[RMDB]
This 207-nucleotide RNA was probed chemically with 2A3 and DMS.
RNA sequence: GGGAACGACUCGAGUAGAGUCGAAAAGGGUUUGAGCCAUCGCCCGAAUAGGAUGGCUGAUACAAGUCGACAUUGUACGCGACGUAGUACGUACUCAUUAGUGCGAAAGCACGGUUAGUCCGACUCGGCAGGGACGAUCUUCUGUCAAUACUUAGAAGGUAUAUAUGAUCUUCGGAUCAUAUAUACCAAAAGAAACAACAACAACAAC
Reactivity to 2A3 in 0.01 (KOAc 150mM, MgCl2 10mM, bicine 150mM(pH8.5), 24C), signal-to-noise 6, nucleotides 027 to 156: g040g020g000u040u060u110g040a010g000c000c010a000u000c000g010c020c010c020g040a080a130u150a090g070g000a000u000g000g000c020u020g010a020u060a100c080a110a020g020u010c010g040a060c050a120u060u260g030u170a040c090g000c010g020a030c060g020u010a020g020u010a090c010g000u010a020c010u020c010a040u060u060a110g000u000g000c020g060a080a020a000g000c010a000c000g010g020u010u000a010g010u000c040c020g020a020c020u030c050g020g000c010a020g000g000g050a040c050g050a100u010c030u120u010c000u030g060u010c010a050a100u110a230c040u070u030a080g030a210a050
Reactivity to DMS in 0.01 (KOAc 150mM, MgCl2 10mM, bicine 150mM(pH8.5), 24C), signal-to-noise 4, nucleotides 027 to 156: g010g010g000u000u000u000g000a060g020c010c000a040u000c020g020c060c030c010g020a150a120u000a080g020g000a030u000g010g030c010u020g010a110u010a050c090a070a070g010u010c010g000a060c050a180u010u000g020u000a030c010g050c020g000a140c120g020u010a150g010u000a050c010g000u000a030c020u000c170a100u000u020a100g040u000g010c020g010a120a090a220g030c020a000c000g010g010u000u010a080g010u000c030c010g020a050c020u000c020g010g010c030a110g000g010g020a080c040g000a080u000c050u000u000c020u000g010u000c040a060a090u000a100c050u000u010a110g020a200a180

The RNA was probed in 150 mM KOAc, 10 mM MgCl2 and 150 mM bicine (pH 8.5) at 24 C.